[RMDB]
RNA sequence: GGGAACGACUCGAGUAGAGUCGAAAAGAUGUUCGCUGAUUCGUCAGCCGCAUGCCCAGGUGGCCGCGAUCUUCAAGGCUACGGCGCGGAUAGGUCCGCGCUGUUCGUUUUCCUCCAACGACGCUAUAAAAGGAACGAAGGUUCGCCUUCGUUCCAACAUAGAUUAGGCGUUCGCGCCUAAUCUAUGAAAAGAAACAACAACAACAAC
Reactivity to 2A3 in 0.01 (KOAc 150mM, MgCl2 10mM, bicine 150mM(pH8.5), 24C), signal-to-noise 4, nucleotides 027 to 156: g070a010u050g020u110u180c060g000c010u020g000a030u010u130c210g050u010c090a000g000c020c020g020c010a010u090g020c000c000c020a020g000g090u050g030g000c030c030g030c060g070a100u040c050u160u100c100a090a060g000g000c000u010a010c020g000g000c000g000c010g010g010a070u140a220g180g220u070c000c000g000c000g000c010u010g000u010u000c000g000u000u010u040u090c050c040u080c060c010a050a020c030g050a010c020g000c080u030a020u080a260a150a050a060g000g000a000a000c000g000a000a000g030g000u050u090c170g080c020c000u000u000c000g000u000u010c000c000a010a000
Reactivity to DMS in 0.01 (KOAc 150mM, MgCl2 10mM, bicine 150mM(pH8.5), 24C), signal-to-noise 1, nucleotides 027 to 156: g000a050u000g050u000u000c090g040c020u020g010a040u000u010c250g000u000c010a020g000c000c130g000c020a020u010g020c000c000c000a270g000g000u000g020g000c000c040g000c060g010a120u000c050u000u010c040a150a200g000g010c020u000a070c010g030g000c000g000c010g000g010a140u000a200g030g000u000c000c000g030c000g040c000u000g020u010u000c050g020u020u000u010u020c000c010u010c080c040a080a070c020g010a040c050g010c040u000a080u000a050a110a260a180g000g000a030a040c000g000a020a010g010g030u000u000c230g020c000c000u000u000c000g000u000u000c000c020a000a050